[RMDB]
RNA sequence: GGGAACGACUCGAGUAGAGUCGAAAAAAGGAUAUUUAAAAGCAAACAUACAGAAUUUGUGUCACAUAAAAAAAACAAACCUGUGAGAGCAGAAGCGGUGUGUUUUGAGAAGUGCAAGACAUGGCAGGGCCAGCUAAUGGAGCUGGUGGAAUGCAUAGCUGUUAUAGCUAUUCGUAGCUAUAACAGCAAAAGAAACAACAACAACAAC
Reactivity to 2A3 in 0.01 (KOAc 150mM, MgCl2 10mM, bicine 150mM(pH8.5), 24C), signal-to-noise 2, nucleotides 027 to 156: a000a000g150g000a100u110a140u130u200u080a190a100a010a010g040c030a040a080a020c030a050u220a050c030a050g150a150a150u090u130u070g000u010g030u070c020a010c030a060u260a090a030a010a030a060a000a020a020c020a020a000a020c010c060u070g010u060g020a080g020a010g020c030a000g010a100a000g030c060g010g010u030g010u020g010u010u050u030u050g060a050g000a070a040g030u030g020c010a020a000g050a020c020a040u040g040g000c030a010g000g090g010c000c000a000g000c020u050a090a090u160g140g020a060g000c010u000g000g030u000g030g080a100a010u060g000c020a040u110a050
Reactivity to DMS in 0.01 (KOAc 150mM, MgCl2 10mM, bicine 150mM(pH8.5), 24C), signal-to-noise 1, nucleotides 027 to 156: a060a040g000g010a130u000a040u020u010u000a080a010a080a130g030c020a030a110a090c040a120u010a300c200a140g040a080a130u000u000u000g000u000g030u010c070a070c100a120u040a020a020a020a070a000a040a090a050c020a010a040a080c050c000u010g060u010g000a120g000a060g000c050a060g000a080a080g030c030g000g000u030g010u010g000u020u000u020u000g000a110g000a070a130g000u000g070c000a030a010g000a110c060a090u000g000g010c000a060g000g040g010c030c010a060g050c000u010a100a110u000g040g020a140g070c020u000g000g030u000g000g000a070a110u000g040c060a070u000a140
About this RNA:
Chemical mapping of a 207-nucleotide RNA with 2A3 and DMS. It was measured as part of the RMDB library OK3TST. The 2A3 profile rests on 1,146 reads. The RNA was probed in 150 mM KOAc, 10 mM MgCl2 and 150 mM bicine (pH 8.5) at 24 C.